[RMDB]
RNA sequence: GGGAACGACUCGAGUAGAGUCGAAAAACAUUAAGUUUCGACUUAAUGUAAACCCGAUGAAGCGGCACAUACGGAGCUUCAUACAUCUAAGUGUGCAAAUAAAAAGUUGAUCCUUCGGGAUCAACAAACACUUCGCGUUAUUCGUAACGCGAAGUGUAAAAGAAACAACAACAACAAC
Reactivity to 2A3 in 0.01 (KOAc 150mM, MgCl2 10mM, bicine 150mM(pH8.5), 24C), signal-to-noise 1, nucleotides 027 to 126: a000c010a010u000u000a010a000g000u010u050u250c220g040a010c010u010u000a000a000u000g000u000a110a000a000c040c000c020g000a130u130g000a070a060g040c010g130g000c070a020c000a040u170a080c100g080g070a040g010c000u060u000c010a040u100a040c040a070u180c030u170a130a040g060u040g020u020g070c040a100a000a000u190a100a110a030a040a060g000u010u010g010a010u050c000c000u040u030c200g150g000g030a010u010c010a000a010c000a000a000